The record gives the reactivity of an RNA of 177 nucleotides to 2A3 and DMS. It was measured as part of the RMDB library TTRDES.
RNA sequence: GGGAACGACUCGAGUAGAGUCGAAAAGAUAUGGACCUGUUCAGGACAUGAAGAUGCUCGGAAACGAGCACCUUCAACAGCCUGGCAGGUCCUAAGUCAAAGUGUUCACGCUUCGGCGUGAACACAACUUUGGCACUAAGUUCGCUUAGUGCCAAAGAAAAGAAACAACAACAACAAC
Reactivity to 2A3 in 0.01 (KOAc 150mM, MgCl2 10mM, bicine 150mM(pH8.5), 24C), signal-to-noise 1, nucleotides 027 to 126: g000a000u000a010u090g000g000a010c000c040u040g040u300u300c050a020g040g000a080c110a300u100g000a000a000g000a020u010g030c010u000c030g010g000a040a000a000c000g000a000g000c020a000c010c000u000u040c010a090a060c130a080g060c000c000u000g000g040c010a010g010g000u030c000c000u000a000a000g000u000c000a000a000a160g000u010g010u000u000c000a010c000g000c000u060u170c300g190g000c000g000u010g000a010a000c000a000c010a000a000
Reactivity to DMS in 0.01 (KOAc 150mM, MgCl2 10mM, bicine 150mM(pH8.5), 24C), signal-to-noise 1, nucleotides 027 to 126: g000a020u000a080u020g010g000a010c000c000u000g040u010u000c000a010g000g000a080c150a150u020g010a030a010g000a040u000g010c000u000c000g020g000a020a070a070c010g000a020g030c000a000c020c000u000u000c000a070a090c280a230g020c010c000u000g000g020c000a020g000g000u000c000c010u000a000a060g000u000c000a180a110a110g000u020g010u000u000c010a000c000g010c020u000u040c270g010g010c000g020u000g020a000a000c010a000c000a030a020

For 2A3 the reverse transcriptase was SuperScript II with manganese. Conditions: 150 mM KOAc, 10 mM MgCl2 and 150 mM bicine (pH 8.5), 24 C.